This 207-nucleotide RNA was probed chemically with 2A3. The 2A3 profile rests on 397 reads. Reactivities are given for positions 27 through 156. The RNA was probed in 150 mM KOAc, 10 mM MgCl2 and 150 mM bicine (pH 8.5) at 24 C.
RNA sequence: GGGAACGACUCGAGUAGAGUCGAAAAAAAUAGCAAUAAAUAAGUCGCAAAACGUGAGCGACGGAAAACGAAAUGAUUUUCAUCCAAAUCAUGUUGACAAAUUUGGCUAUAGGCCAAAGGGCAUCACGUCAUCACAUGGGCUAAGUCCUCGAAUCAACAGUAUGAGGCGAUUCGUCGCCUCAUACUGAAAAGAAACAACAACAACAAC
Reactivity to 2A3 in 0.01 (KOAc 150mM, MgCl2 10mM, bicine 150mM(pH8.5), 24C), signal-to-noise 1, nucleotides 027 to 156: a000a000a000u080a020g010c030a020a050u100a250a100a080u120a210a070g040u030c130g000c170a020a000a120a080c050g030u020g040a050g030c040g000a000c000g030g050a080a040a000a010c030g090a020a000a020u060g070a050u040u020u130u210c140a170u050c150c070a000a010a020u020c000a000u080g000u040u210g010a020c010a000a090a040u020u020u000g000g010c020u120a100u270a250g080g130c000c030a000a000a000g030g030g000c060a010u090c060a020c020g020u010c010a000u010c000a020c020a120u070g020g000g010c000u040a070a000g070u100c000c010u070c050g080a000a050u080c020a030a080